Source: RMDB library TTRDES, as collected in RNAgym. This 177-nucleotide RNA was probed chemically with 2A3 and DMS. The 2A3 profile rests on 5,135 reads.
[RMDB]
RNA sequence: GGGAACGACUCGAGUAGAGUCGAAAAGAUAUGGAGAGUCCGUGCAUUCAUCGAUCUUUCGUCGGAAACGACGAAAGGGAGAAUGUAACGGAGCUCUCCUAAGUCAAAAUCAGGCUUCGGCCUGAAACUUAAAUAAGGGGUUCGCCCCUUAUUUAAGAAAAGAAACAACAACAACAAC
Reactivity to 2A3 in 0.01 (KOAc 150mM, MgCl2 10mM, bicine 150mM(pH8.5), 24C), signal-to-noise 3, nucleotides 027 to 126: g020a020u130a000u160g000g000a020g010a000g020u010c010c010g020u020g000c010a010u000u020c030a200u300c060g060a080u020c020u000u000u000c000g020u000c000g000g080a160a090a120c020g000a000c010g000a010a000a000g020g000g000a010g000a000a000u010g010u030a300a060c000g000g010a020g000c000u020c000u000c000c000u000a020a010g020u000c000a010a010a030a300u010c000a000g000g000c000u090u180c300g140g010c010c000u010g000a010a010a010
Reactivity to DMS in 0.01 (KOAc 150mM, MgCl2 10mM, bicine 150mM(pH8.5), 24C), signal-to-noise 5, nucleotides 027 to 126: g000a050u010a300u010g010g000a010g010a020g020u000c000c000g020u000g000c000a020u000u010c000a300u000c190g000a060u010c000u000u000u000c010g010u000c000g000g010a130a090a240c000g010a010c000g010a010a000a000g010g010g000a030g010a020a010u000g000u010a050a040c000g000g000a050g010c010u000c000u000c000c000u010a020a090g010u010c040a110a070a170a220u000c000a010g010g010c010u000u020c250g040g000c000c000u000g000a020a060a180